RNA sequence: GGGAACGACUCGAGUAGAGUCGAAAAGCGGGCUGGAGAGAGGAGAGAAGCCAUCGAGCCACAUGGACCCCUACAGCCCGGAAUCUGAGCUGUGGUAGGAUUGGCUGCGAUUGGGAUUGGCAGACACAAGAAGUUGUACUUUCGAGUACAACUUCUUAAAAGAAACAACAACAACAAC
Reactivity to 2A3 in 0.01 (KOAc 150mM, MgCl2 10mM, bicine 150mM(pH8.5), 24C), signal-to-noise 2, nucleotides 027 to 126: g050c060g010g000g000c000u020g020g020a070g000a010g000a050g100g000a040g000a020g000a090a010g010c000c000a050u060c050g040a060g030c030c010a060c010a060u080g100g030a070c000c000c000c030u010a010c010a000g000c030c010c020g000g020a040a080u050c030u050g030a010g020c000u010g000u040g050g070u080a050g030g070a070u040u060g020g010c020u050g060c030g060a070u040u110g050g000g020a020u000u050g060g020c020a030g020a060c020a020c000
Reactivity to DMS in 0.01 (KOAc 150mM, MgCl2 10mM, bicine 150mM(pH8.5), 24C), signal-to-noise 5, nucleotides 027 to 126: g010c020g020g010g010c040u000g010g010a090g000a120g000a110g020g000a130g010a120g000a140a160g020c010c020a070u000c100g010a140g000c030c040a080c220a080u000g010g020a160c040c010c070c020u010a040c020a010g000c000c010c010g010g010a060a070u000c080u010g010a060g000c050u000g010u000g000g010u000a070g010g000a090u000u010g010g010c010u000g010c060g000a070u010u000g010g000g010a120u000u000g010g010c030a070g000a100c140a070c220
Source: RMDB library OK2TRN, as collected in RNAgym. The record gives the reactivity of an RNA of 177 nucleotides to 2A3 and DMS. For 2A3 the reverse transcriptase was SuperScript II with manganese. Conditions: 150 mM KOAc, 10 mM MgCl2 and 150 mM bicine (pH 8.5), 24 C. For DMS, 6,758 sequencing reads were counted. 2A3 is a SHAPE reagent: it acylates the 2'-hydroxyl of flexible nucleotides of all four kinds.